[RMDB]
This 207-nucleotide RNA was probed chemically with DMS and 2A3.
RNA sequence: GGGAACGACUCGAGUAGAGUCGAAAACGCUUGAGUCCAGGAGUUCUGGGCUGUAGUGCGCUAUGCCGAUCGGGUGUCCGCACUAAGUUCGGCAUCAAUAUGGUGACCUCCCGGGAGCGGGGGACCACCAGGUUGCCUAAGGAGGGGUGAACCGGCCGGUAAUGGAAUACUUCGGUAUUCCAUUACCAAAAGAAACAACAACAACAAC
Reactivity to DMS in 0.01 (KOAc 150mM, MgCl2 10mM, bicine 150mM(pH8.5), 24C), signal-to-noise 1, nucleotides 027 to 156: c050g010c040u000u010g040a030g050u000c000c000a040g060g000a210g010u000u020c060u000g020g020g080c030u010g000u000a030g040u000g030c010g000c050u000a050u000g000c000c000g030a080u000c090g010g050g030u000g020u020c250c130g000c060a080c040u010a070a120g020u000u020c010g030g000c020a040u000c020a060a110u000a110u000g030g000u010g000a060c000c000u000c030c000c020g020g030g040a180g030c010g000g010g020g020g020a010c010c000a020c000c010a040g010g030u000u000g000c030c030u020a040a070g010g020a130g000g000g000g040u000g010a060a080c010c040g030g000c070c080
Reactivity to 2A3 in 0.01 (KOAc 150mM, MgCl2 10mM, bicine 150mM(pH8.5), 24C), signal-to-noise 4, nucleotides 027 to 156: c030g000c020u050u100g130a010g010u020c010c020a020g060g040a250g100u270u190c040u030g000g010g000c000u000g020u020a010g020u020g020c030g020c080u070a040u070g020c000c000g070a120u080c070g060g010g030u040g030u030c040c080g080c040a010c010u070a100a130g030u050u020c010g010g000c000a000u010c020a020a120u090a090u170g020g000u030g030a110c000c000u060c000c020c010g050g070g040a140g060c070g010g000g010g020g040a070c090c000a000c000c010a000g030g000u000u030g020c010c010u020a060a020g050g030a020g020g040g010g010u050g020a030a040c010c000g040g000c070c090
Values cover nucleotides 27 to 156.